[RMDB]
Structure probing data (2A3) for a 207-nucleotide construct.
For 2A3, 505 sequencing reads were counted.
2A3 is a SHAPE reagent: it acylates the 2'-hydroxyl of flexible nucleotides of all four kinds.
Reactivities are rounded to 0.1 and cut off at 0 and 3.
The data come from the RNA Mapping Database (RMDB), library OK3TST.
Conditions: 150 mM KOAc, 10 mM MgCl2 and 150 mM bicine (pH 8.5), 24 C.
For 2A3 the reverse transcriptase was SuperScript II with manganese.
Reactivities are given for positions 27 through 156.

RNA sequence: GGGAACGACUCGAGUAGAGUCGAAAACAACACACAUACACACAACAAACUAACACGAUACUAUAAUCCCUCCCCCGCCUGAGUAUGUUAAAGCUGUAUACAUACGUCUCUUUUGAGAUUCUAGACAGACCAUUCUAGACAGCAAAACUAACAAAGCCGGAUCCAUUUCUUUCGAGAAAUGGAUCCGAAAAGAAACAACAACAACAAC
Reactivity to 2A3 in 0.01 (KOAc 150mM, MgCl2 10mM, bicine 150mM(pH8.5), 24C), signal-to-noise 1, nucleotides 027 to 156: c080a090a030c040a000c000a000c040a040u160a000c010a030c030a010c040a190a000c040a110a190a000c060u140a140a010c040a000c120g060a050u070a120c030u180a100u140a230a050u070c030c020c000u030c000c000c000c000c000g020c010c000u000g010a000g000u010a000u010g020u000u000a000a000a010g000c010u000g010u000a010u000a000c010a000u000a000c000g010u000c010u000c020u090u300u190u140g000a000g000a010u000u030c010u010a010g000a010c010a010g010a010c010c010a030u000u030c020u020a010g010a050c010a000g010c000a020a020a050a050c170u300a040a000c040a040a040a300g070c070